[RMDB]
RNA sequence: GGGAACGACUCGAGUAGAGUCGAAAAGUGCACAUACAUGGCGAGGGGCUUGACAUACCGACGGCGGGUGCACACAGAAGUCGAAGUCGACGCGCGGACUACAGAGCCCAGCCACUUCGACGGUCCGAUACGCGAGCAACUUAUGAGGACGGCCGCAGAGGCCAUGUAAAUUCGUUUACAUGGCCUCAAAAGAAACAACAACAACAAC
Reactivity to 2A3 in 0.01 (KOAc 150mM, MgCl2 10mM, bicine 150mM(pH8.5), 24C), signal-to-noise 3, nucleotides 027 to 156: g000u010g000c010a020c000a040u220a020c050a050u100g080g000c050g030a160g010g040g030g090c030u080u100g050a070c030a090u170a100c000c040g030a070c020g060g030c030g000g050g000u030g010c070a000c010a010c000a030g200a180a000g000u010c000g000a040a010g030u070c080g020a100c050g070c040g020c090g040g040a030c070u170a120c160a090g050a010g070c000c000c000a010g000c010c010a020c020u000u010c000g000a000c040g000g000u000c010c020g020a100u130a180c080g020c000g020a050g030c010a020a080c050u210u130a100u220g020a030g010g040a020c010g040g000c020c030g010c020a020
Reactivity to DMS in 0.01 (KOAc 150mM, MgCl2 10mM, bicine 150mM(pH8.5), 24C), signal-to-noise 1, nucleotides 027 to 156: g090u000g000c000a070c010a080u020a110c070a070u010g040g000c010g010a210g060g000g020g040c050u020u020g000a110c080a160u010a050c000c000g000a070c030g010g000c030g040g000g010u000g000c000a050c040a130c030a140g030a020a070g060u000c010g000a040a040g000u000c000g030a020c050g010c050g050c050g050g010a090c120u010a210c160a190g000a030g000c000c020c010a120g010c000c010a070c020u000u000c000g010a090c020g010g040u010c030c030g020a150u010a060c060g000c070g000a170g000c060a080a090c010u000u010a090u000g010a110g010g010a060c000g030g030c000c040g000c080a160